[RMDB]
Source information:
Structure probing data (2A3 and DMS) for a 177-nucleotide construct. Source: RMDB library RFM100, as collected in RNAgym. Conditions: 150 mM KOAc, 10 mM MgCl2 and 150 mM bicine (pH 8.5), 24 C. For DMS the reverse transcriptase was MarathonRT. Reactivities are given for positions 27 through 126.

RNA sequence: GGGAACGACUCGAGUAGAGUCGAAAACAGGGUUGCGCCGGCCUCCGGGUUGCACACCGCCCAGAAGGUGGAGUGAGGUGAGCCGUCGCCAACAGCGCCGAGCCAGGACAGUUACCCCAGAAGGGAGCUAUCCGGCGUGAUUCGUCACGCCGGAUAGAAAAGAAACAACAACAACAAC
Reactivity to 2A3 in 0.01 (KOAc 150mM, MgCl2 10mM, bicine 150mM(pH8.5), 24C), signal-to-noise 2, nucleotides 027 to 126: c070a030g170g040g000u040u080g010c000g010c000c000g000g000c000c010u000c010c010g060g010g040u100u160g000c050a000c010a010c020c020g030c020c000c000a110g090a080a060g010g060u010g000g010a090g040u050g000a110g040g020u020g020a000g070c040c020g030u000c000g110c060c000a000a000c030a020g050c070g000c000c000g000a000g060c080c010a000g000g070a010c000a070g000u010u060a190c000c000c010c050a060g060a140a060g040g020g000a010g030
Reactivity to DMS in 0.01 (KOAc 150mM, MgCl2 10mM, bicine 150mM(pH8.5), 24C), signal-to-noise 1, nucleotides 027 to 126: c040a170g000g000g000u010u000g080c150g100c070c080g020g000c060c000u000c000c070g000g030g010u070u030g000c000a070c100a110c020c060g040c020c000c060a220g000a110a190g000g000u010g000g000a070g000u000g000a200g000g000u000g020a030g000c000c040g010u000c020g000c090c080a020a070c000a080g000c010g000c000c000g000a210g010c060c020a110g000g000a070c070a010g000u000u000a160c030c030c000c070a080g000a100a120g000g000g060a130g000